[RMDB]
RNA sequence: GGGAACGACUCGAGUAGAGUCGAAAAGACGAACAUCACCGCCCCACCCGGGGGACUCCUGGUGUACGACAGCGCCCCCAACCUAACGGACCCCCACGUGCUCUGGGCGGAGGGGGCCGGCCCGGGCCGUGUCCGCUAGAUUCGUCUAGCGGACACGAAAAGAAACAACAACAACAAC
Reactivity to DMS in 0.01 (KOAc 150mM, MgCl2 10mM, bicine 150mM(pH8.5), 24C), signal-to-noise 1, nucleotides 027 to 126: g020a100c060g000a210a080c060a060u000c060a020c160c190g000c010c000c000c000a060c110c060c220g000g000g000g030g000a050c020u000c060c080u000g000g000u000g010u000a050c090g000a300c050a060g000c180g000c040c000c000c030c000a090a230c090c060u010a000a140c100g000g000a080c000c010c000c000c000a190c130g010u000g000c040u000c050u040g010g000g050c030g030g020a080g000g000g010g000g000c000c010g010g000c040c030c030g000g000g000c110
Reactivity to 2A3 in 0.01 (KOAc 150mM, MgCl2 10mM, bicine 150mM(pH8.5), 24C), signal-to-noise 2, nucleotides 027 to 126: g090a000c060g010a070a040c020a050u060c010a030c020c030g070c000c000c000c020a040c000c050c040g020g000g000g000g100a080c030u110c030c030u040g070g000u030g050u070a050c100g050a040c020a020g000c020g020c040c020c000c010c010a030a110c000c040u130a080a090c090g060g060a100c000c000c000c010c000a020c050g030u050g010c020u020c080u150g020g050g000c030g000g010a140g000g010g000g000g000c000c000g000g010c000c010c000g030g000g000c000
Description
The data come from the RNA Mapping Database (RMDB), library OK1LIB. The record gives the reactivity of an RNA of 177 nucleotides to DMS and 2A3. 2A3 adducts were read by reverse transcription with SuperScript II with manganese. DMS adducts were read by reverse transcription with MarathonRT. The RNA was probed in 150 mM KOAc, 10 mM MgCl2 and 150 mM bicine (pH 8.5) at 24 C.